[RMDB]
RNA sequence: GGGAACGACUCGAGUAGAGUCGAAAAGAUAUGGACACGUAUUGCAAGUCGCGUCGGAAACGACGCAAUGAUGACCAAUCGUGUCCUAAGUCAAACAUUACUUGUGACUUCGGUCACAAGUAAUGAAGGUGUGAUACUUCUUCGGAAGUAUCACACCAAAAGAAACAACAACAACAAC
Reactivity to DMS in 0.01 (KOAc 150mM, MgCl2 10mM, bicine 150mM(pH8.5), 24C), signal-to-noise 2, nucleotides 027 to 126: g030a090u000a300u010g000g000a010c010a000c000g000u030a030u020u000g010c010a050a290g000u000c000g060c000g010u000c010g040g000a170a050a190c000g000a000c000g000c000a030a030u050g010a010u020g000a300c300c020a040a000u000c020g020u000g000u000c000c000u000a000a150g000u000c030a050a100a230c030a000u000u000a000c000u010u000g010u000g000a000c030u010u020c190g020g000u000c000a000c000a000a000g000u010a000a000u020g000a050a050
Reactivity to 2A3 in 0.01 (KOAc 150mM, MgCl2 10mM, bicine 150mM(pH8.5), 24C), signal-to-noise 1, nucleotides 027 to 126: g060a010u050a020u200g020g000a010c010a010c000g140u300a040u070u020g000c040a090a050g020u020c010g000c000g030u020c000g030g040a070a040a060c000g000a010c000g000c010a020a030u170g000a020u050g010a010c000c010a010a000u020c000g000u010g000u030c000c000u000a030a000g020u000c030a000a100a000c000a020u000u010a000c000u020u000g000u000g010a000c000u050u100c300g160g000u000c000a000c000a010a010g000u000a000a000u000g000a050a060

The record gives the reactivity of an RNA of 177 nucleotides to DMS and 2A3. The RNA was probed in 150 mM KOAc, 10 mM MgCl2 and 150 mM bicine (pH 8.5) at 24 C. For DMS the reverse transcriptase was MarathonRT. For 2A3, 4,548 sequencing reads were counted. Source: RMDB library TTRDEL, as collected in RNAgym.